[RMDB]
RNA sequence: GGGAACGACUCGAGUAGAGUCGAAAACAUUCUUCACGUGAGAAUUGUUUACAAAUUGUCUCUAAACACAUGUGAAUCACAGGCCUCAGUUAUCUAAACGAAAUCUGUACUUACUUUCAGAAUGUAAUCUACUAAUGCUCUUCGGAGCAUUAGUAGAAAAAGAAACAACAACAACAAC
Reactivity to DMS in 0.01 (KOAc 150mM, MgCl2 10mM, bicine 150mM(pH8.5), 24C), signal-to-noise 4, nucleotides 027 to 126: c020a040u000u000c020u000u010c030a090c240g030u050g010a030g010a010a030u030u010g030u000u000u010a140c140a080a080a070u020u010g010u000c040u000c030u000a070a040a090c130a070c030a070u020g000u000g000a060a040u000c110a030c080a040g000g000c080c010u010c030a060g020u030u020a050u010c110u030a050a120a090c080g000a020a070a060u000c010u010g010u000a070c130u000u000a060c160u010u000u000c080a030g000a080a060u040g000u000a050a110
Reactivity to 2A3 in 0.01 (KOAc 150mM, MgCl2 10mM, bicine 150mM(pH8.5), 24C), signal-to-noise 7, nucleotides 027 to 126: c000a020u030u000c000u050u040c040a060c200g140u210g040a030g070a040a060u110u110g040u010u040u040a050c130a020a150a130u150u110g060u040c020u000c000u120a060a110a010c040a010c000a090u050g020u020g060a040a030u080c040a040c030a060g050g010c010c010u090c060a020g010u010u070a120u090c120u170a050a070a070c030g030a040a040a050u030c020u010g020u080a020c010u110u050a050c020u030u090u170c040a040g030a080a030u060g050u130a060a060